[RMDB]
RNA sequence: GGGAACGACUCGAGUAGAGUCGAAAACAGGUUGGAAGCUACACACGGCACCUGGAAAGAUCCCACAGCUCUGUGUGGAUGUGGCUGCUGCUCUUCAGGCUGUGGGAUGGUUUGGCGAUGGAACCAAGCGGGUUCAGUGCUCACGACGUCUGUUCAAGAUCGUAUAGGCAUUCGUGCCUAUACGAUCAAAAGAAACAACAACAACAAC
Reactivity to 2A3 in 0.01 (KOAc 150mM, MgCl2 10mM, bicine 150mM(pH8.5), 24C), signal-to-noise 1, nucleotides 027 to 156: c030a010g030g000u060u140g100g090a060a000g090c070u050a020c050a000c030a020c130g040g000c090a080c010c000u010g040g110a080a080a000g100a050u000c000c000c000a000c000a000g000c000u000c010u180g010u000g050u100g110g060a050u080g050u110g130g020c060u140g070c040u100g000c020u030c000u190u090c020a000g000g050c010u000g000u040g020g000g000a000u000g000g010u010u010u020g000g000c150g010a110u070g050g010a040a060c000c000a010a010g070c120g020g000g010u040u120c060a020g010u000g080c000u020c020a060c050g040a000c000g070u080c090u060g020u090u120c010a040a010
The record gives the reactivity of an RNA of 207 nucleotides to 2A3. 2A3 adducts were read by reverse transcription with SuperScript II with manganese. The 2A3 profile rests on 712 reads. The data come from the RNA Mapping Database (RMDB), library OK3TST. Conditions: 150 mM KOAc, 10 mM MgCl2 and 150 mM bicine (pH 8.5), 24 C.